[RMDB]
RNA sequence: GGGAACGACUCGAGUAGAGUCGAAAAAAAAAGAUAUGGAUAGCAUCGCUUGGAUUUACAGCACUAUCACGUUCGGAAACGAACGUGACGAAUGCUGUUGUCAGCGAGGCUAUCCUAAGUCAAAAAAGAAACAACGUUAGUUCGCUAACGUUGUUUCAAAAGAAACAACAACAACAAC
Reactivity to DMS in 0.01 (KOAc 150mM, MgCl2 10mM, bicine 150mM(pH8.5), 24C), signal-to-noise 1, nucleotides 027 to 126: a040a030a040a070a050g000a020u000a300u000g010g000a020u000a000g000c000a030u000c000g000c000u000u000g060g010a040u000u000u000a010c000a000g000c000a020c080u010a270u000c000a000c000g040u000u000c010g020g000a110a070a100c000g020a010a020c010g030u000g030a000c070g010a030a030u000g000c010u000g010u000u000g000u000c000a020g000c000g010a000g000g010c000u000a000u000c000c000u000a010a040g000u020c010a010a040a100a070a070a130
Reactivity to 2A3 in 0.01 (KOAc 150mM, MgCl2 10mM, bicine 150mM(pH8.5), 24C), signal-to-noise 2, nucleotides 027 to 126: a000a030a050a110a090g090a070u170a030u160g010g010a010u010a020g030c020a030u000c010g010c080u120u210g300g030a090u300u300u080a040c000a000g000c010a020c090u070a020u040c000a000c000g000u040u010c000g010g050a060a050a030c030g010a000a000c030g000u000g020a010c030g050a300a220u040g000c000u010g000u000u000g000u010c020a000g000c010g020a000g040g000c010u000a000u000c000c000u020a040a010g020u010c000a290a000a000a000a010a000